[RMDB]
RNA sequence: GGGAACGACUCGAGUAGAGUCGAAAAAUCUAAUGAAUACAUACAGGACAAUUUGUUGUUUAUUGUCAGCUUUGAGUUUAGGAUGUAUCAUAGGCACCAUACUUAUUUUUGGAGAUGUUUCCCUCAAAAAGAUAGACACAUUCGUGUGUCUAUCUUUAAAAGAAACAACAACAACAAC
Reactivity to 2A3 in 0.01 (KOAc 150mM, MgCl2 10mM, bicine 150mM(pH8.5), 24C), signal-to-noise 5, nucleotides 027 to 126: a000u040c040u110a100a050u070g060a090a010u060a040c020a010u060a030c030a040g130g000a010c030a030a020u030u040u130g030u010u000g010u000u050u050a040u010u040g020u010c030a040g120c090u130u150u230g140a130g080u090u100u180a070g020g060a060u010g020u030a000u020c030a020u020a030g120g000c040a000c040c000a040u080a130c070u170u130a130u210u160u020u080u100g090g000a050g000a020u040g050u020u050u000c020c000c000u060c060a070a140
Reactivity to DMS in 0.01 (KOAc 150mM, MgCl2 10mM, bicine 150mM(pH8.5), 24C), signal-to-noise 7, nucleotides 027 to 126: a050u010c020u010a080a050u000g010a100a030u010a030c030a020u010a070c080a200g010g000a030c030a020a070u010u010u000g020u010u000g000u010u000u010a110u030u010g010u000c010a070g000c060u010u010u010g010a240g020u000u010u010a110g010g010a020u000g010u000a020u000c030a040u000a060g000g010c110a130c040c020a050u000a060c100u010u010a130u010u000u010u010u000g010g010a080g010a050u010g000u010u000u000c000c000c020u020c200a060a050
This 177-nucleotide RNA was probed chemically with 2A3 and DMS.
2A3 adducts were read by reverse transcription with SuperScript II with manganese.
The RNA was probed in 150 mM KOAc, 10 mM MgCl2 and 150 mM bicine (pH 8.5) at 24 C.
Reactivities are rounded to 0.1 and cut off at 0 and 3.
Source: RMDB libraries RFM100 and RFMREP, as collected in RNAgym.